[RMDB]
RNA sequence: GGGAACGACUCGAGUAGAGUCGAAAAGAUAUGGAGAAUAGAAGCUUUUGACGCGGAUUAUUCGGAAACGAAUAAAUCGCGAUAAGCUUUCAUUCUCCUAAGUCAAAUCCACGGUUCGCCGUGGAAACACCUGAAUAAUCUUCGGAUUAUUCAGGUGAAAAGAAACAACAACAACAAC
Reactivity to 2A3 in 0.01 (KOAc 150mM, MgCl2 10mM, bicine 150mM(pH8.5), 24C), signal-to-noise 3, nucleotides 027 to 126: g020a010u090a040u220g000g020a020g010a030a000u090a160g030a020a020g000c020u090u200u300u300g280a210c040g000c000g020g030a020u000u010a000u000u010c000g010g000a030a110a020c000g000a010a010u000a000a030a040u020c010g000c010g040a030u030a050a000g000c000u050u100u050c000a000u000u000c000u000c010c000u010a090a000g010u010c010a000a040a230u050c000c000a010c010g010g070u070u090c300g020c110c000g000u000g000g000a060a010a010
Reactivity to DMS in 0.01 (KOAc 150mM, MgCl2 10mM, bicine 150mM(pH8.5), 24C), signal-to-noise 3, nucleotides 027 to 126: g010a030u000a300u000g000g000a030g000a020a020u000a080g010a030a000g000c010u000u000u000u010g030a150c040g030c000g030g010a060u000u000a010u000u000c000g000g000a160a090a200c010g020a010a000u000a000a020a050u000c000g050c000g010a070u000a010a010g010c010u010u000u000c040a030u000u000c000u000c000c000u000a020a070g000u000c020a070a130a140u000c010c000a010c000g000g020u010u010c300g010c010c010g010u000g000g000a000a040a190
Chemical mapping of a 177-nucleotide RNA with 2A3 and DMS. DMS adducts were read by reverse transcription with MarathonRT. For 2A3 the reverse transcriptase was SuperScript II with manganese. For 2A3, 6,129 sequencing reads were counted. The reactions ran in a buffer of 150 mM KOAc, 10 mM MgCl2 and 150 mM bicine (pH 8.5), at 24 C. The DMS profile rests on 3,169 reads.